[RMDB]
RNA sequence: GGGAACGACUCGAGUAGAGUCGAAAAUAGAGGUAUGAGGAUUGCCUCACUAACCCCAAGGUGAGGCUGCCAACCGAGCACAUGCCACGGUGGCCGAAUCUUAAUGAGAUUCCAUACGUUGGAUUAACUAGCAUUACUUUUUCGAAAGUAAUGCUAGAAAAGAAACAACAACAACAAC
Reactivity to DMS in 0.01 (KOAc 150mM, MgCl2 10mM, bicine 150mM(pH8.5), 24C), signal-to-noise 9, nucleotides 027 to 126: u020a120g010a110g010g020u000a000u010g000a130g010g010a140u020u020g010c010c000u000c000a000c010u000a070a110c070c000c000c040a150a240g000g000u000g000a010g010g020c000u000g000c010c000a030a020c010c000g000a300g010c010a240c260a070u020g000c000c010a020c000g000g000u000g000g010c030c230g000a040a030u000c030u000u010a070a120u020g000a050g000a030u000u000c000c010a010u000a010c030g010u000u000g010g010a150u010u010a070a170
Reactivity to 2A3 in 0.01 (KOAc 150mM, MgCl2 10mM, bicine 150mM(pH8.5), 24C), signal-to-noise 8, nucleotides 027 to 126: u190a020g090a040g030g080u030a020u030g030a080g060g040a060u070u140g010c000c000u010c000a000c000u040a030a220c020c000c000c010a030a020g000g000u000g000a000g000g000c000u010g000c000c000a030a040c000c010g000a000g020c010a120c080a300u300g010c010c010a050c010g020g000u010g000g000c000c000g020a010a030u000c000u100u230a170a120u280g060a030g010a060u020u000c010c000a010u020a040c060g070u040u060g050g030a100u110u020a070a050

The record gives the reactivity of an RNA of 177 nucleotides to DMS and 2A3. Reactivities are given for positions 27 through 126. For DMS the reverse transcriptase was MarathonRT. 2A3 adducts were read by reverse transcription with SuperScript II with manganese.